Structure probing data (2A3 and DMS) for a 207-nucleotide construct. Conditions: 150 mM KOAc, 10 mM MgCl2 and 150 mM bicine (pH 8.5), 24 C. In probing experiments dimethyl sulfate is read out at A N1 and C N3, which are open when not base-paired. For 2A3 the reverse transcriptase was SuperScript II with manganese. For DMS, 4,211 sequencing reads were counted. Source: RMDB library OK3TST, as collected in RNAgym.
RNA sequence: GGGAACGACUCGAGUAGAGUCGAAAACGAUAGAGCUGGCGGCCGUGAUGUGAGGUGUAUAUGUGGAGAGAGACACGUGUUAUUUCCCAUGCUCCUGGAUUCUAUUACGGAAAACUGUGUUCCAAAUGCCCAGGUUACGUCAUGCAACAACUACAUGCUCCUUCAUUAACUUCGGUUAAUGAAGGAGAAAAGAAACAACAACAACAAC
Reactivity to 2A3 in 0.01 (KOAc 150mM, MgCl2 10mM, bicine 150mM(pH8.5), 24C), signal-to-noise 4, nucleotides 027 to 156: c050g050a060u110a040g050a010g030c040u010g010g020c000g030g010c000c030g050u040g020a050u050g040u040g040a040g000g030u040g020u040a070u010a030u120g070u100g040g030a040g000a000g000a000g030a080c020a000c100g070u100g050u090u070a080u060u040u010c000c000c000a000u050g000c000u030c000c000u010g020g060a050u110u030c040u070a100u180u120a060c030g020g000a030a030a060a040c050u090g030u020g030u190u040c040c010a000a060a090u080g000c020c030c000a010g000g000u050u070a030c050g020u010c040a010u130g020c000a030a050c010a020a020c050u110a030c020a070u110g020
Reactivity to DMS in 0.01 (KOAc 150mM, MgCl2 10mM, bicine 150mM(pH8.5), 24C), signal-to-noise 2, nucleotides 027 to 156: c020g030a110u000a070g010a060g010c010u000g010g020c030g020g000c030c040g030u000g030a040u000g040u010g020a090g020g030u010g000u010a100u000a030u010g030u000g040g010a120g010a140g010a180g010a080c050a080c140g020u010g010u000u000a120u000u000u010c010c010c030a120u000g040c050u000c020c030u010g020g000a170u010u000c030u000a080u010u000a150c070g010g010a030a090a070a110c030u000g000u000g000u000u000c060c120a040a040a140u000g010c030c000c010a080g020g000u000u000a070c080g030u010c050a050u000g000c020a070a090c080a080a110c020u010a040c050a020u000g010